Annotation:
This 177-nucleotide RNA was probed chemically with 2A3 and DMS.

RNA sequence: GGGAACGACUCGAGUAGAGUCGAAAACGAGCUCAACGAGGCGUUCGCGUCGGUGGUGCUGAAGUUCCAGAAGGACCUCAACAUUCCCGACGAGAAGCUCAACGUCAACGGUGGCGCCAUCGCGAUGGCUAAACACGUGCUUCGGCACGUGUUUAGCAAAAGAAACAACAACAACAAC
Reactivity to 2A3 in 0.01 (KOAc 150mM, MgCl2 10mM, bicine 150mM(pH8.5), 24C), signal-to-noise 1, nucleotides 027 to 126: c010g010a020g000c040u030c070a000a100c030g050a030g030g070c010g030u040u060c030g000c000g050u070c000g020g020u060g020g020u040g020c020u000g030a030a000g030u090u080c020c020a060g190a100a160g040g020a020c000c000u040c010a000a010c000a050u060u000c010c000c000g000a020c000g020a040g010a000a010g040c050u020c040a070a000c070g040u000c020a110a100c060g080g050u050g000g000c010g000c000c030a080u070c040g000c030g080a080u100g070
Reactivity to DMS in 0.01 (KOAc 150mM, MgCl2 10mM, bicine 150mM(pH8.5), 24C), signal-to-noise 2, nucleotides 027 to 126: c040g020a040g020c010u000c030a080a110c040g020a140g000g030c000g010u000u010c020g000c010g000u000c010g030g020u010g010g010u000g020c010u010g000a010a020g020u000u000c000c030a250g030a200a260g000g020a040c020c030u000c000a000a010c010a020u000u000c290c000c000g010a010c000g000a070g000a040a060g000c020u020c060a090a140c090g000u000c100a070a050c050g000g030u010g000g010c040g000c030c010a020u000c050g000c190g010a130u000g000
For 2A3, 1,699 sequencing reads were counted.
Conditions: 150 mM KOAc, 10 mM MgCl2 and 150 mM bicine (pH 8.5), 24 C.
For DMS, 1,515 sequencing reads were counted.